Source: RMDB library TTRINS, as collected in RNAgym. An RNA of 177 nucleotides, treated with DMS and read out base by base. The DMS profile rests on 9,727 reads. High DMS reactivity at an A or C suggests that its Watson-Crick edge is free. The reactions ran in a buffer of 150 mM KOAc, 10 mM MgCl2 and 150 mM bicine (pH 8.5), at 24 C.
[RMDB]
RNA sequence: GGGAACGACUCGAGUAGAGUCGAAAAGAUAUGGAGUGGUUUGCGCACAGGCCAAAUGGGACAAUGUAGGUCGGAAACGACCUAUGAUCCCAUUUGGCCUGUGAACUACGCAUGCCACUCCUAAGUCCUAGUAUGAUUUCUUCGGAAAUCAUACUAGAAAAGAAACAACAACAACAAC
Reactivity to DMS in 0.01 (KOAc 150mM, MgCl2 10mM, bicine 150mM(pH8.5), 24C), signal-to-noise 5, nucleotides 027 to 126: g000a120u000a300u010g010g010a030g040u000g010g020u000u000u000g000c010g010c000a010c000a010g000g000c000c000a000a010a010u000g000g010g020a020c050a090a050u010g000u000a010g000g010u000c000g010g000a140a120a250c000g010a020c000c000u010a000u000g010a070u000c000c000c000a000u000u000u000g000g000c010c000u000g000u000g010a030a030c160u010a300c030g010c000a010u000g000c000c010a000c000u000c000c010u000a000a050g010u010c040